[RMDB]
RNA sequence: GGGAACGACUCGAGUAGAGUCGAAAAGCAACAAAAGCAGCCAUCAUCACCACAAUACUAUACUGGCGUCUACAAAGGAUUUAAGGAAAAUCAUCAAUGUGUUUAACGCGCAGCGACGUCUACGCCUAUGUCAGGGAAACGAUCAAUAAACGAAAACCACCCUUACUCGUUUCGACGAGUAAGGGUGAAAAGAAACAACAACAACAAC
Reactivity to 2A3 in 0.01 (KOAc 150mM, MgCl2 10mM, bicine 150mM(pH8.5), 24C), signal-to-noise 2, nucleotides 027 to 156: g020c040a020a130c040a040a170a040a000g100c080a040g000c030c050a050u100c000a020u060c010a040c040c040a070c080a100a050u200a120c050u180a080u050a120c030u040g030g000c020g060u000c040u060a070c070a040a070a010g080g050a050u030u170u180a000a120g060g080a050a110a070a010u020c040a020u010c060a030a100u070g060u000g040u120u120u090a060a010c060g030c010g000c020a000g010c000g030a030c080g010u040c020u040a030c020g060c000c000u090a090u210g100u110c050a030g020g000g060a090a010a000c030g030a040u080c020a110a020u130a140a140a010c080g070a020a130a000a000c010